RNA sequence: GGGAACGACUCGAGUAGAGUCGAAAAUUGCCUUGACUGGGUUUCGGAGUCUCUUUAGACUUACGGACCCUAAAUUUGGCAGGGCGGACCGCUCUGCCAUUUUGUUUAUGUCGAAAGACAACAGUGGAGUUAGGUACGGUUUCGACCGUACCUAACUAAAAGAAACAACAACAACAAC
Reactivity to 2A3 in 0.01 (KOAc 150mM, MgCl2 10mM, bicine 150mM(pH8.5), 24C), signal-to-noise 3, nucleotides 027 to 126: u040u150g070c010c000u050u090g070a060c160u040g020g000g000u060u200u200c020g000g010a010g010u050c020u000c040u060u120u300a000g000a000c000u000u140a240c030g000g000a000c000c000c030u020a000a000a000u020u020u020g000g010c000a000g000g000g000c050g020g040a160c080c130g000c000u020c000u000g000c000c000a000u040u070u050u040g060u000u140u070a120u070g010u000c000g070a070a000a080g030a030c020a130a060c000a170g030u090g200g000
Reactivity to DMS in 0.01 (KOAc 150mM, MgCl2 10mM, bicine 150mM(pH8.5), 24C), signal-to-noise 1, nucleotides 027 to 126: u050u010g000c040c030u000u030g020a110c300u050g010g050g030u010u000u000c010g060g000a000g000u000c010u000c300u070u010u070a000g000a000c000u050u000a060c020g000g000a030c000c010c000u040a000a020a030u000u000u000g030g050c030a020g000g010g000c000g000g020a210c230c140g010c010u000c000u000g000c010c000a000u030u020u000u000g000u000u000u020a070u000g040u050c020g000a100a040a100g000a040c010a070a030c050a120g000u000g000g030
This 177-nucleotide RNA was probed chemically with 2A3 and DMS. The DMS profile rests on 1,701 reads. The RNA was probed in 150 mM KOAc, 10 mM MgCl2 and 150 mM bicine (pH 8.5) at 24 C. Values cover nucleotides 27 to 126. DMS adducts were read by reverse transcription with MarathonRT.